Structure probing data (2A3 and DMS) for a 177-nucleotide construct.
Values cover nucleotides 27 to 126.
2A3 adducts were read by reverse transcription with SuperScript II with manganese.
For 2A3, 7,481 sequencing reads were counted.
The data come from the RNA Mapping Database (RMDB), library OK2TST.
Conditions: 150 mM KOAc, 10 mM MgCl2 and 150 mM bicine (pH 8.5), 24 C.

RNA sequence: GGGAACGACUCGAGUAGAGUCGAAAAGCUUCCGAAGGGAGAGCGGACGGGUAUAGACGGCUCGCGGAGCGGGUGGGCGAGGUGCUUGCGGAAGAGGGCCUUGAACUCGUAUACGGUGGUGGGGACGCGUAGAUUCUCUAUUCGUAGAGAAUCUACGAAAAGAAACAACAACAACAAC
Reactivity to 2A3 in 0.01 (KOAc 150mM, MgCl2 10mM, bicine 150mM(pH8.5), 24C), signal-to-noise 5, nucleotides 027 to 126: g010c030u050u000c010c000g050a080a060g070g030g000a110g010a010g040c030g030g030a030c050g030g040g050u110a110u060a170g130a050c050g050g010c030u030c050g090c060g040g020a070g010c090g020g000g070u220g010g020g000c040g020a030g050g030u090g050c040u090u120g070c030g010g020a040a020g020a060g020g000g000c000c000u030u060g030a050a010c010u030c090g030u070a070u030a110c050g000g040u060g030g070u110g020g010g010g000a010c040g000
Reactivity to DMS in 0.01 (KOAc 150mM, MgCl2 10mM, bicine 150mM(pH8.5), 24C), signal-to-noise 5, nucleotides 027 to 126: g020c080u000u000c020c020g020a160a130g010g010g000a070g010a090g020c040g010g010a090c090g010g010g020u010a150u000a120g010a110c100g000g000c030u010c030g010c090g010g000a120g020c100g010g000g000u000g000g000g010c070g000a050g020g010u010g010c060u000u000g010c050g010g000a070a070g000a110g000g000g010c060c040u010u000g000a070a070c050u000c040g000u010a090u010a100c120g010g000u010g010g010u000g010g000g000g030a080c180g010